The record gives the reactivity of an RNA of 177 nucleotides to DMS and 2A3. 2A3 adducts were read by reverse transcription with SuperScript II with manganese. Source: RMDB library M2PK50, as collected in RNAgym. DMS adducts were read by reverse transcription with MarathonRT.
[RMDB]
RNA sequence: GGGAACGACUCGAGUAGAGUCGAAAACCUCCAAACUUCGGUUUGGAGGAAAAGGAGCCAAAAUAAGAACCGAAAGGGAAGACGGAACCCAAGUCUAUAAAAAAAGUACCAUGUUCGCAUGGUACAAGAUACUAUUCGGGUUCGCCCGAAUAGUAUCAAAAGAAACAACAACAACAAC
Reactivity to DMS in 0.01 (KOAc 150mM, MgCl2 10mM, bicine 150mM(pH8.5), 24C), signal-to-noise 2, nucleotides 027 to 126: c010c000u010c000c000a010a000a020c000u000u010c150g020g000u000u020u000g000g000a020g030g000a000a040a070a050g010g010a070g020c030c060a090a050a090a160u000a070a060g040a130a160c020c010g000a090a090a160g000g000g000a050a060g010a040c020g000g030a060a080c040c040c010a070a070g010u000c050u000a120u040a020a000a070a020a060a140a110g000u000a000c000c000a010u000g000u010u010c160g000c000a020u000g010g000u000a000c000a020a030
Reactivity to 2A3 in 0.01 (KOAc 150mM, MgCl2 10mM, bicine 150mM(pH8.5), 24C), signal-to-noise 2, nucleotides 027 to 126: c000c000u040c010c020a010a000a010c010u030u110c210g070g010u010u000u010g000g000a010g000g010a010a010a010a050g050g000a020g050c030c010a050a070a020a070u190a100a050g060a090a060c000c050g050a070a040a050g030g000g010a030a000g010a000c030g030g030a050a060c000c000c010a040a010g050u000c100u080a200u300a060a100a030a020a000a010a020g000u010a010c010c000a000u000g030u010u060c220g000c090a000u000g030g000u000a000c000a010a000